[RMDB]
RNA sequence: GGGAACGACUCGAGUAGAGUCGAAAACGAGCUUGAAUUGCGUUUCGUAGGUUACGUCUACGUUAAAACGUUACAGUUAAAUAUAACUGCUAAAAACGAAAACAACUCUUACGCUUUAGCUGCCUAAAAACAGUUAGCGUAGAUCCUCUCGGCAUCGGUACUCGCAAGACUUCGGUCUUGCGAGUACAAAAGAAACAACAACAACAAC
Reactivity to 2A3 in 0.01 (KOAc 150mM, MgCl2 10mM, bicine 150mM(pH8.5), 24C), signal-to-noise 2, nucleotides 027 to 156: c000g010a000g010c120u180u130g050a110a050u200u180g100c000g010u010u030u030c000g000u000a000g010g030u110u110a060c050g040u070c000u000a010c000g050u030u120a000a130a000a000c000g030u030u040a010c000a000g000u000u020a110a210a020u260a030u070a140a050c040u080g050c080u130a160a000a000a000a060c080g060a050a030a000a070c030a030a060c030u060c020u080u070a010c000g000c000u100u160u000a040g030c000u000g000c000c030u050a060a070a020a030a020c010a020g020u020u000a000g000c000g010u000a030g000a060u020c010c000u030c050u050c130g050g040c000a030u090c060g010
Structure probing data (2A3) for a 207-nucleotide construct. The RNA was probed in 150 mM KOAc, 10 mM MgCl2 and 150 mM bicine (pH 8.5) at 24 C. It was measured as part of the RMDB library ARCHII.